Background:
This 177-nucleotide RNA was probed chemically with DMS and 2A3. The RNA was probed in 150 mM KOAc, 10 mM MgCl2 and 150 mM bicine (pH 8.5) at 24 C. 2A3 adducts were read by reverse transcription with SuperScript II with manganese. DMS adducts were read by reverse transcription with MarathonRT.
RNA sequence: GGGAACGACUCGAGUAGAGUCGAAAAGACUCUGCCUGAUGGUUGUCCUGGGCGCCGCCGUUGGUUACUUCCUCUUCUGCUGGAAGAAAUCGGUUAUCGUGGACGUAACCGAGCACUGUCACUAAAACUCGAUUUACUGAUUCGUCAGUAAAUCGAGAAAAGAAACAACAACAACAAC
Reactivity to DMS in 0.01 (KOAc 150mM, MgCl2 10mM, bicine 150mM(pH8.5), 24C), signal-to-noise 3, nucleotides 027 to 126: g000a040c010u000c010u000g010c000c020u010g010a070u000g010g000u000u010g000u000c030c020u010g000g010g010c060g020c090c060g000c020c040g010u000u000g000g000u000u000a100c040u000u000c040c010u010c060u000u020c090u010g030c160u020g010g010a070a040g000a040a100a100u000c020g000g010u010u000a020u010c090g010u020g010g000a080c190g010u000a020a020c020c010g000a030g020c110a060c130u000g000u000c070a070c080u010a040a100a080a110
Reactivity to 2A3 in 0.01 (KOAc 150mM, MgCl2 10mM, bicine 150mM(pH8.5), 24C), signal-to-noise 2, nucleotides 027 to 126: g010a000c020u010c000u010g020c010c030u050g030a090u130g100g000u070u050g030u020c000c020u030g010g020g030c020g000c040c030g010c020c040g060u070u130g010g020u020u030a040c020u030u020c000c000u050c000u050u020c040u070g140c020u070g030g000a040a020g010a080a130a020u080c000g020g040u110u080a080u130c110g060u140g090g050a020c040g010u000a010a040c020c020g000a000g000c020a010c110u110g000u060c020a020c100u140a130a130a150a050